[RMDB]
RNA sequence: GGGAACGACUCGAGUAGAGUCGAAAAUACGCGAGGUUCGCCUCGCGUAAAAGAGGAGCGUAAACCUGAGCGUACGUAGUGCUGUACAUCGUUCCUACACGAAUGCACAUGGUUUCGACCAUGUGAAGACGUCAUAACAGUUCGCUGUUAUGACGUCAAAAGAAACAACAACAACAAC
Reactivity to 2A3 in 0.01 (KOAc 150mM, MgCl2 10mM, bicine 150mM(pH8.5), 24C), signal-to-noise 4, nucleotides 027 to 126: u030a000c000g000c000g000a000g030g010u060u120c190g080c040c000u010c000g000c010g000u010a000a000a000a030g090a040g020g030a010g010c020g050u140a050a080a110c020c040u050g070a040g050c070g030u020a030c040g070u080a030g120u080g180c110u110g020u050a020c010a050u030c020g000u000u010c000c000u040a040c090a000c060g200a110a020u200g000c000a010c000a000u010g000g020u030u070u150c130g040a010c000c000a000u000g000u000g000a000a030
Reactivity to DMS in 0.01 (KOAc 150mM, MgCl2 10mM, bicine 150mM(pH8.5), 24C), signal-to-noise 4, nucleotides 027 to 126: u000a000c000g010c000g000a020g010g020u000u020c190g020c010c000u000c020g030c010g010u000a010a020a070a100g000a080g000g000a060g010c040g010u000a070a050a070c020c020u010g010a070g010c120g010u000a040c070g010u010a140g020u010g020c070u000g020u000a060c080a120u000c010g000u000u000c000c000u000a060c170a080c180g000a070a090u000g000c010a010c010a010u000g000g000u000u000u000c160g000a070c000c000a020u000g030u000g010a020a080

Structure probing data (2A3 and DMS) for a 177-nucleotide construct. For DMS the reverse transcriptase was MarathonRT. 2A3 adducts were read by reverse transcription with SuperScript II with manganese. The DMS profile rests on 4,314 reads.